[RMDB]
RNA sequence: GGGAACGACUCGAGUAGAGUCGAAAAACCGCGGGGAAGCGCCUUCGGUACGCCAGCAACAACCCCAACGUGUCGGGACUGACGCCUCCGGAGACGAAGGAUUCGUGCGCCACGUCGGCCAGCGUCACACAGUGUCGAGAUUCGUCUCGACACUGUGAAAAGAAACAACAACAACAAC
Reactivity to 2A3 in 0.01 (KOAc 150mM, MgCl2 10mM, bicine 150mM(pH8.5), 24C), signal-to-noise 5, nucleotides 027 to 126: a000c030c000g000c020g020g010g000g010a150a060g070c040g080c040c000u060u050c020g030g010u030a060c060g020c000c020a030g030c010a040a090c030a040a090c040c010c000c000a030a070c060g070u100g070u080c020g020g020g050a060c020u030g010a000c040g020c020c030u050c030c030g020g020a030g000a010c030g040a090a110g030g000a040u070u070c040g020u070g020c030g010c020c010a040c040g040u040c030g070g050c020c000a030g000c010g050u020c020a010
Reactivity to DMS in 0.01 (KOAc 150mM, MgCl2 10mM, bicine 150mM(pH8.5), 24C), signal-to-noise 3, nucleotides 027 to 126: a060c040c010g040c040g010g000g060g020a110a150g000c070g000c000c020u010u000c120g010g010u000a030c050g060c020c010a140g000c060a100a130c110a100a140c050c020c030c030a160a110c120g000u020g010u000c070g020g030g010a100c120u010g020a040c050g010c010c080u000c010c010g000g010a180g030a050c060g020a100a090g020g010a110u000u010c030g000u020g010c060g000c020c000a040c030g000u010c070g010g060c060c020a060g000c040g010u010c030a270